RNA sequence: GGGAACGACUCGAGUAGAGUCGAAAAGCUCUGGAAUUGAGGCCCCUCUAACAAUAAUCCAAAACUACUUCGCAGAGUAAUCUGCCGAAUCGUAGGAUGCCCAUUACUAUCUAUUUAUGGAGCAUCUAAAACUGUCAGUGCUUCGGCACUGACAGAAGACAUAACGUAGGUUCGCCUACGUUAUGUCAAAAGAAACAACAACAACAAC
Reactivity to DMS in 0.01 (KOAc 150mM, MgCl2 10mM, bicine 150mM(pH8.5), 24C), signal-to-noise 1, nucleotides 027 to 156: g020c000u000c010u000g020g000a150a090u010u000g010a120g020g020c020c000c010c050u000c080u000a130a190c070a070a080u010a100a080u000c030c050a050a090a090a140c030u000a070c060u000u000c020g010c010a010g020a070g010u000a120a130u000c000u000g010c030c020g010a020a060u000c150g010u000a150g010g080a030u000g010c000c010c010a100u010u000a080c160u000a120u000c080u010a060u000u000u000a060u010g040g010a090g010c000a060u000c000u000a070a030a050a120c000u000g010u000c000a000g030u000g010c000u000u010c300g050g000c000a010c000u000g010a010c010a000g030a010a040
Reactivity to 2A3 in 0.01 (KOAc 150mM, MgCl2 10mM, bicine 150mM(pH8.5), 24C), signal-to-noise 4, nucleotides 027 to 156: g010c010u030c030u030g060g060a150a070u130u070g020a030g030g040c010c010c020c010u080c090u130a120a090c090a120a120u150a070a030u050c040c010a030a040a010a120c020u010a000c000u010u010c010g000c010a000g010a010g040u080a040a170u010c000u000g050c080c030g010a010a020u070c070g010u020a050g090g010a000u000g000c000c000c000a020u060u060a050c050u060a080u280c040u060a120u080u180u020a000u020g000g020a100g020c020a000u000c010u040a000a010a000a160c010u000g000u010c000a000g000u000g000c000u040u070c130g080g000c000a000c000u000g000a000c000a000g000a000a000